Chemical mapping of a 177-nucleotide RNA with DMS and 2A3. Conditions: 150 mM KOAc, 10 mM MgCl2 and 150 mM bicine (pH 8.5), 24 C. For 2A3 the reverse transcriptase was SuperScript II with manganese. The data come from the RNA Mapping Database (RMDB), library OK2TST. The DMS profile rests on 2,406 reads.
[RMDB]
RNA sequence: GGGAACGACUCGAGUAGAGUCGAAAACGGCGUCAAGAACGUCAGGAUACUCAAGCUUGGCUCCCCGUUCCCGGUCCCAUACGGCCUGCUUGAAAAGUUCUUCGACGGCCUUGAGAAGGUGCUCAUCGGUGGUAAAUGAGUUCGCUCAUUUACCACCAAAAGAAACAACAACAACAAC
Reactivity to DMS in 0.01 (KOAc 150mM, MgCl2 10mM, bicine 150mM(pH8.5), 24C), signal-to-noise 2, nucleotides 027 to 126: c100g000g000c100g020u000c030a030a040g010a070a050c010g010u010c040a130g000g030a120u000a060c120u000c020a040a020g010c000u000u000g020g000c030u000c040c030c010c000g010u010u000c010c000c000g010g010u010c010c000c020a120u010a100c180g020g020c010c010u000g000c030u000u000g000a030a070a150a120g010u000u000c010u000u000c100g040a030c030g020g020c090c010u010u000g010a060g020a130a140g010g010u010g000c030u000c090a090u010c180
Reactivity to 2A3 in 0.01 (KOAc 150mM, MgCl2 10mM, bicine 150mM(pH8.5), 24C), signal-to-noise 1, nucleotides 027 to 126: c010g000g040c040g050u030c010a070a030g010a060a000c000g000u040c070a060g080g030a060u080a080c020u000c000a010a000g000c010u120u130g030g000c000u090c000c030c000c000g020u000u010c010c010c020g020g070u020c010c000c000a040u080a130c070g020g000c010c020u010g010c020u030u000g000a000a010a000a040g030u000u030c010u030u050c060g000a000c010g090g000c000c000u000u000g010a010g010a040a010g080g000u070g030c020u050c050a200u210c100